[RMDB]
RNA sequence: GGGAACGACUCGAGUAGAGUCGAAAAUCUGUUGCCCAGGCUAGAGUGCACUGGUAUGAUCACUGCUCACUGUAUCCUCGAUCUCUCAGGCUUAAGCAAUCCUCCUUACCUCAGCCUCCUGAGCAGCACAGAGAGGUAAAUUCGUUUACCUCUCUGUAAAAGAAACAACAACAACAAC
Reactivity to 2A3 in 0.01 (KOAc 150mM, MgCl2 10mM, bicine 150mM(pH8.5), 24C), signal-to-noise 5, nucleotides 027 to 126: u040c030u040g050u050u060g050c010c000c020a010g030g000c040u070a050g010a070g170u120g020c050a050c160u060g010g040u090a080u130g050a060u080c030a030c080u040g000c020u020c010a050c040u050g040u100a080u070c000c020u040c020g040a080u020c040u000c010u020c060a030g070g000c020u050u130a050a010g040c020a040a080u040c000c010u020c000c000u020u060a070c000c010u020c000a010g020c000c000u020c000c000u020g030a030g000c020a000g020c010
Reactivity to DMS in 0.01 (KOAc 150mM, MgCl2 10mM, bicine 150mM(pH8.5), 24C), signal-to-noise 9, nucleotides 027 to 126: u010c050u000g010u000u000g010c040c010c020a080g000g000c080u000a070g010a100g010u010g010c060a090c060u000g000g020u000a060u000g000a080u000c070a090c060u000g010c030u000c040a080c080u000g010u010a070u000c030c010u010c070g010a070u000c040u000c030u000c060a090g010g010c070u000u000a060a090g010c080a070a080u000c030c020u000c020c030u000u000a090c060c020u000c050a090g010c040c030u000c030c020u000g000a070g010c050a050g010c150